[RMDB]
RNA sequence: GGGAACGACUCGAGUAGAGUCGAAAAGGGAGGAAGGAUCACAUGACGAGAGGGAGUGUAUGGUAAGAGGCGGGGAACGCCGAGUAGGGUUUUCUCCCAAGAAGGUGAAGAGAAGGCAAGAAUCGGACGUAUGAGUGUAGUUCGCUACACUCAUACGAAAAGAAACAACAACAACAAC
Reactivity to DMS in 0.01 (KOAc 150mM, MgCl2 10mM, bicine 150mM(pH8.5), 24C), signal-to-noise 2, nucleotides 027 to 126: g010g000g000a100g000g020a120a070g000g010a070u010c080a080c100a110u000g010a130c140g020a090g000a090g010g010g010a070g050u000g020u000a120u000g000g050u010a080a110g000a110g020g020c100g010g020g000g000a060a100c120g000c010c020g010a110g020u000a100g010g010g020u000u000u010u010c050u000c010c000c050a090a120g000a070a080g000g000u010g010a030a070g000a060g000a050a030g000g010c090a050a050g020a120a100u000c050g000g000a170
Reactivity to 2A3 in 0.01 (KOAc 150mM, MgCl2 10mM, bicine 150mM(pH8.5), 24C), signal-to-noise 2, nucleotides 027 to 126: g060g020g020a040g050g050a030a030g030g030a060u080c020a020c040a120u210g060a050c070g040a020g010a010g090g030g000a030g010u080g000u040a120u100g030g000u030a060a020g010a050g030g070c040g010g010g000g010a080a020c030g010c020c000g000a020g080u110a050g020g020g020u090u010u040u000c040u050c020c030c010a000a030g080a020a000g030g040u080g030a050a040g000a010g020a040a010g030g010c020a040a020g040a080a030u010c010g000g050a010
Record summary: The record gives the reactivity of an RNA of 177 nucleotides to DMS and 2A3. The reactions ran in a buffer of 150 mM KOAc, 10 mM MgCl2 and 150 mM bicine (pH 8.5), at 24 C. The data come from the RNA Mapping Database (RMDB), library VIROID.